Structure probing data (DMS) for a 177-nucleotide construct.
The reactions ran in a buffer of 150 mM KOAc, 10 mM MgCl2 and 150 mM bicine (pH 8.5), at 24 C.
RNA sequence: GGGAACGACUCGAGUAGAGUCGAAAAGAUAUGGAGCCAUGCCUUCUUGGACCCACAGGUCGGAAACGACCUAAGUGGCUAGAAGACAUGGCUCCUAAGUCAAAAGGGGCGAGUUCGCUCGCCCCAAGCUAAACAUGAUGUUCGCAUCAUGUUUAGCAAAAGAAACAACAACAACAAC
Reactivity to DMS in 0.01 (KOAc 150mM, MgCl2 10mM, bicine 150mM(pH8.5), 24C), signal-to-noise 4, nucleotides 027 to 126: g020a060u010a300u010g000g010a030g020c000c000a020u000g000c000c010u000u000c010u010u010g050g010a150c300c000c030a030c050a020g010g020u000c000g010g010a090a070a260c010g020a010c000c000u000a040a070g050u000g020g010c020u000a000g020a010a010g000a030c000a000u000g000g010c000u010c000c000u000a000a070g010u000c040a090a060a170a180g010g000g000g010c010g020a030g020u000u020c290g010c030u000c010g010c000c000c000c000a000a000